[RMDB]
RNA sequence: GGGAACGACUCGAGUAGAGUCGAAAACAUGACCUGUUCGCAGGUCAUGAAAGUGGACGAGGAGCGAUGAACCCACACAAAACAAGACAUCGGAAAAUAAAAAAAGCAAGUGCUUCGGCACUUGCAACAUAUCCAGUGCGUUCGCGCACUGGAUAUGAAAAGAAACAACAACAACAAC
Reactivity to DMS in 0.01 (KOAc 150mM, MgCl2 10mM, bicine 150mM(pH8.5), 24C), signal-to-noise 1, nucleotides 027 to 126: c020a000u010g010a020c010c000u010g020u010u020c200g030c000a030g010g000u000c020a000u010g000a020a060a130g010u000g030g000a080c050g000a080g010g010a090g000c030g000a080u000g010a110a080c010c000c020a060c080a060c090a060a050a080a030c090a110a080g000a160c030a010u000c040g010g020a150a020a070a090u010a040a030a060a070a060a090a140g000c000a000a000g010u000g020c000u010u040c130g040g010c000a000c000u000u000g010c000a000a010
Reactivity to 2A3 in 0.01 (KOAc 150mM, MgCl2 10mM, bicine 150mM(pH8.5), 24C), signal-to-noise 2, nucleotides 027 to 126: c010a000u000g010a000c010c000u020g010u020u080c140g000c070a020g000g000u000c000a000u000g000a000a000a010g070u060g020g020a030c070g030a110g100g060a090g120c030g020a030u060g030a030a090c020c040c000a000c010a010c010a010a110a040a010c030a020a040g070a050c010a020u040c070g090g040a050a090a170a040u300a070a080a030a010a000a030a000g000c010a000a000g000u000g020c010u040u030c110g020g050c000a000c000u000u010g000c010a000a000

Chemical mapping of a 177-nucleotide RNA with DMS and 2A3. Conditions: 150 mM KOAc, 10 mM MgCl2 and 150 mM bicine (pH 8.5), 24 C. Reactivities are rounded to 0.1 and cut off at 0 and 3. For DMS, 904 sequencing reads were counted. The 2A3 profile rests on 2,070 reads. It was measured as part of the RMDB library M2PK50.